[RMDB]
Structure probing data (2A3) for a 177-nucleotide construct. The data come from the RNA Mapping Database (RMDB), library OK1LIB. For 2A3 the reverse transcriptase was SuperScript II with manganese. The reactions ran in a buffer of 150 mM KOAc, 10 mM MgCl2 and 150 mM bicine (pH 8.5), at 24 C.
RNA sequence: GGGAACGACUCGAGUAGAGUCGAAAAUGCAGACCAAUCAACAUGGCACCUGCCAUUGCUACCUGUACAGUCAAGGAUGGUAGAAAUGUUGUCGGUCCUUGCACACGAAUAUUACGCCAUUUGCCUGCGUGCGUGUACGCUUCGGCGUACACGCACGAAAAGAAACAACAACAACAAC
Reactivity to 2A3 in 0.01 (KOAc 150mM, MgCl2 10mM, bicine 150mM(pH8.5), 24C), signal-to-noise 2, nucleotides 027 to 126: u060g000c010a010g030a060c010c010a060a150u120c000a000a000c000a010u020g130g030c000a120c060c080u010g000c000c000a030u020u070g140c000u100a170c010c000u090g070u200a140c030a240g030u080c040a110a000g070g010a020u000g010g000u000a000g030a000a120a000u030g000u010u000g010u010c050g020g000u000c000c050u030u140g040c020a000c000a020c050g090a130a010u290a230u190u200a070c090g080c070c000a040u050u100u240g050c000c030u020g000